Structure probing data (2A3 and DMS) for a 207-nucleotide construct. For 2A3, 1,958 sequencing reads were counted. For 2A3 the reverse transcriptase was SuperScript II with manganese. The data come from the RNA Mapping Database (RMDB), library M2RFPK.

[RMDB]
RNA sequence: GGGAACGACUCGAGUAGAGUCGAAAAUUUCAUUUGAGUAUCCUGAAAACGGGCUUUUCAGCAUGGAACGUACAUAUUAAAUAGUAGGAGUGCAUAGUGGCCCGUAUAGCAGGCAUUAACAUUCCUGAAAACGUGAAAAGGUUCGCCUUUUCACGAACUUUGGUUUUAUGUUCGCAUAAAACCAAAGAAAAGAAACAACAACAACAAC
Reactivity to 2A3 in 0.01 (KOAc 150mM, MgCl2 10mM, bicine 150mM(pH8.5), 24C), signal-to-noise 3, nucleotides 027 to 156: u050u040u010c010a030u080u070u130g040a030g060u060a070u080c000c000u000g020a030a000a060a070c040g000g000g000c020u080u130u160u180c060a010g000c010a020u030g070g050a160a020c040g080u090a020c020a010u190a080u190u300a140a150a130u120a020g060u010a000g010g150a110g040u020g000c010a040u050a160g090u060g070g000c020c000c000g000u010a000u000a020g000c000a000g010g040c000a010u030u020a040a000c010a040u000u050c000c000u000g030a110a160a000a030c000g010u010g000a000a000a000a000g000g030u040u060c130g140c040c000u000u010u000u000c000a000c000g000a050a000
Reactivity to DMS in 0.01 (KOAc 150mM, MgCl2 10mM, bicine 150mM(pH8.5), 24C), signal-to-noise 2, nucleotides 027 to 156: u000u010u000c030a170u000u000u000g060a170g020u010a090u000c030c000u010g010a030a060a130a090c010g010g020g020c020u000u000u000u000c080a160g050c030a050u000g020g020a090a080c090g050u010a150c060a140u000a150u010u010a080a080a230u010a120g020u000a050g030g010a160g000u000g010c020a060u000a130g000u000g000g000c000c000c010g020u000a020u020a100g030c010a020g000g020c100a040u000u000a100a090c020a040u000u000c010c020u000g000a090a010a080a190c040g050u000g000a000a000a010a020g000g000u000u010c300g000c010c020u000u000u000u000c000a000c000g020a030a010